[RMDB]
RNA sequence: GGGAACGACUCGAGUAGAGUCGAAAAGCCUCUAGCGUUUGCUAAACGCUGUUUGCGCAAUGAUCUGGAUUUAGCGCAAGUAGGUCCGAAAUCCAGAUCAACAUUUCGGACAACCGCGCUAAUUAAACAAGCAGUAGUUGUUCGCAACUACUGCUUGAAAAGAAACAACAACAACAAC
Reactivity to 2A3 in 0.01 (KOAc 150mM, MgCl2 10mM, bicine 150mM(pH8.5), 24C), signal-to-noise 2, nucleotides 027 to 126: g030c000c000u000c100u070a010g000c030g010u060u080u260g270c080u140a060a010a080c010g000c030u030g040u060u120u070g050c040g000c000a060a120u130g040a060u070c050u080g080g020a090u000u090u100a030g010c000g000c010a020a020g110u080a070g020g140u020c000c000g010a030a000a000u030c060c020a040g020a060u010c010a000a010c000a030u000u050u050c020g000g010a000c000a040a020c040c020g000c000g000c070u050a110a070u120u100a080a090a030
Reactivity to DMS in 0.01 (KOAc 150mM, MgCl2 10mM, bicine 150mM(pH8.5), 24C), signal-to-noise 3, nucleotides 027 to 126: g000c020c000u000c150u000a020g000c000g000u000u000u010g020c240u000a050a070a020c010g010c010u000g010u010u010u000g000c080g030c020a130a100u000g010a090u000c010u000g000g000a110u010u020u000a040g010c000g030c010a080a110g010u010a090g020g010u010c010c000g010a020a030a050u000c080c060a100g000a070u010c110a040a060c180a060u000u010u000c010g010g020a020c020a060a040c070c150g000c010g000c020u010a030a040u010u010a050a120a150

Chemical mapping of a 177-nucleotide RNA with 2A3 and DMS.
DMS adducts were read by reverse transcription with MarathonRT.
The reactions ran in a buffer of 150 mM KOAc, 10 mM MgCl2 and 150 mM bicine (pH 8.5), at 24 C.